[RMDB]
RNA sequence: GGGAACGACUCGAGUAGAGUCGAAAACGUCAGACGACGAAGUCGGUCCAUCUGCGGUAACAGACCGACAUAGAGUUCGAAGCAGAACGAACAACCGCAGACACACGAUUGGAGUGUGAAUGAGAGAAGCUAGGUCGUACUUCGGUACGACCUAGCUAAAAGAAACAACAACAACAAC
Reactivity to DMS in 0.01 (KOAc 150mM, MgCl2 10mM, bicine 150mM(pH8.5), 24C), signal-to-noise 1, nucleotides 027 to 126: c120g010u000c000a220g020a140c080g000a000c020g050a140a280g030u000c030g060g000u000c000c180a030u000c000u000g170c000g000g000u000a120a020c170a080g000a010c000c000g000a000c000a160u000a000g000a190g200u000u000c020g000a200a120g020c300a110g000a020a020c120g060a080a000c090a140a020c000c000g000c000a000g000a130c110a000c000a000c000g030a250u000u050g040g000a300g000u000g000u000g000a070a150u030g000a110g000a020g000a160
Reactivity to 2A3 in 0.01 (KOAc 150mM, MgCl2 10mM, bicine 150mM(pH8.5), 24C), signal-to-noise 1, nucleotides 027 to 126: c000g010u000c000a010g100a280c040g000a000c070g060a000a000g000u000c000g070g000u000c000c000a070u000c010u000g000c000g000g030u060a010a010c020a100g000a000c000c000g000a000c000a000u220a010g110a050g000u000u020c000g110a090a000g130c300a000g020a050a080c010g000a000a000c080a000a000c020c020g050c010a000g070a080c000a000c000a000c040g170a110u070u230g180g000a100g060u000g000u000g060a000a080u260g000a000g020a000g080a110